[RMDB]
RNA sequence: GGGAACGACUCGAGUAGAGUCGAAAAGCGUCUUUUCUUGCUUGGAUCCAUUUCUCGAGGACGUCCUCCCUUCCUCCCCUCCGGGUCCUCUUCGUCUCGGACUGGCUCAUCUUCGGAGUGGGGGCGGCAACACUCCGCUUCGGCGGAGUGAAAAGAAACAACAACAACAAC
Reactivity to 2A3 in 0.01 (KOAc 150mM, MgCl2 10mM, bicine 150mM(pH8.5), 24C), signal-to-noise 9, nucleotides 027 to 129: g020c020g060u120c110u090u210u110u050c090u200u240g020c010u020u010g040g040a060u060c040c040a140u070u130u030c010u000c010g010a020g050g060a150c010g020u010c010c010u040c000c000c000u040u050c000c000u010c000c000c000c010u000c000c000g020g000g010u020c020c020u030c030u080u070c040g170u030c060u040c120g030g010a030c020u030g020g020c020u030c070a170u050c070u200u110c020g010g000a030g020u100g020g010g000g000g010c020g020g000c000a070a030
Reactivity to DMS in 0.01 (KOAc 150mM, MgCl2 10mM, bicine 150mM(pH8.5), 24C), signal-to-noise 9, nucleotides 027 to 129: g030c030g040u010c080u040u050u040u030c130u050u040g030c000u020u020g000g020a090u030c080c060a190u010u010u010c000u010c000g010a010g010g020a110c070g000u010c020c040u010c010c000c010u030u020c020c010u010c010c020c030c020u000c000c000g040g000g000u020c040c040u020c100u030u000c060g030u030c070u030c080g010g020a060c050u020g010g020c270u020c070a080u030c070u030u030c050g020g010a030g010u020g020g000g020g020g030c300g000g000c160a080a130